[RMDB]
Structure probing data (2A3 and DMS) for a 177-nucleotide construct. For 2A3 the reverse transcriptase was SuperScript II with manganese. For 2A3, 8,335 sequencing reads were counted. DMS adducts were read by reverse transcription with MarathonRT. The data come from the RNA Mapping Database (RMDB), library OK2TST. The RNA was probed in 150 mM KOAc, 10 mM MgCl2 and 150 mM bicine (pH 8.5) at 24 C.
RNA sequence: GGGAACGACUCGAGUAGAGUCGAAAAGACGCAGGAGAACCGCGAAACGUGCCGGCCGCUCCGUCGACAAGAGAGAAGGACUGCAUGCUGGUUUUGCACGGCUUCUGGUCCAACUCCGGCGGGAUGCCAGACCGUAUACUUUCGAGUAUACGGUCUGAAAAGAAACAACAACAACAAC
Reactivity to 2A3 in 0.01 (KOAc 150mM, MgCl2 10mM, bicine 150mM(pH8.5), 24C), signal-to-noise 5, nucleotides 027 to 126: g060a000c020g000c030a010g000g060a080g020a080a040c020c010g020c070g000a040a040a020c040g020u040g030c040c000g020g010c010c000g020c020u010c020c000g030u010c010g020a060c070a170a100g130a000g010a000g040a200a040g060g010a010c010u040g000c050a040u100g000c030u100g040g100u110u140u260u240g090c110a030c020g020g000c000u030u000c030u060g020g000u020c020c000a010a040c010u010c010c000g000g000c000g000g050g020a050u130g040c010
Reactivity to DMS in 0.01 (KOAc 150mM, MgCl2 10mM, bicine 150mM(pH8.5), 24C), signal-to-noise 7, nucleotides 027 to 126: g000a100c050g010c030a030g000g010a070g010a100a100c030c020g010c100g000a030a050a090c090g000u000g020c020c180g000g000c030c110g020c030u010c020c050g010u000c010g010a150c120a120a110g000a130g010a100g010a080a260g000g010a020c040u000g010c180a040u010g010c010u010g040g000u000u000u010u000g010c080a050c010g000g000c090u000u000c030u010g000g010u010c020c050a070a180c010u000c010c010g010g010c010g010g000g000a070u010g010c100